An RNA of 177 nucleotides, treated with DMS and 2A3 and read out base by base. The reactions ran in a buffer of 150 mM KOAc, 10 mM MgCl2 and 150 mM bicine (pH 8.5), at 24 C.

[RMDB]
RNA sequence: GGGAACGACUCGAGUAGAGUCGAAAAUGAAAACAAUGUGCGGGCAAAAAACGCACUAGAUACAGGAGGACAAGACUGGUGCCAGCACCCGCGGUAAUACCAGCUCCUGGAGUGUCUAUGAUGAUUGAACUUCCAUGUAAUUCGUUACAUGGAAGUUAAAAGAAACAACAACAACAAC
Reactivity to DMS in 0.01 (KOAc 150mM, MgCl2 10mM, bicine 150mM(pH8.5), 24C), signal-to-noise 9, nucleotides 027 to 126: u040g000a120a070a100a100c130a080a080u020g010u000g000c000g000g000g030c170a000a060a070a070a070a080c020g000c010a010c010u000a040g000a070u020a090c020a030g010g000a020g000g020a100c210a110a090g010a300c010u000g000g010u000g000c020c010a050g010c070a190c050c040c070g010c090g000g010u010a070a060u030a110c010c000a020g000c010u000c000c010u000g000g010a150g010u010g000u000c050u000a090u020g000a060u010g000a120u000u010g000
Reactivity to 2A3 in 0.01 (KOAc 150mM, MgCl2 10mM, bicine 150mM(pH8.5), 24C), signal-to-noise 6, nucleotides 027 to 126: u120g010a000a030a000a030c090a030a100u120g000u000g010c000g010g100g030c170a170a100a020a000a000a010c010g000c000a000c010u010a000g030a020u090a040c010a000g000g040a010g010g060a070c070a160a080g070a070c020u020g010g010u020g010c020c010a030g010c050a070c020c000c030g010c020g000g010u070a070a050u060a120c010c010a040g070c010u000c000c000u000g010g060a110g070u090g030u000c020u020a060u140g110a060u080g020a040u060u160g040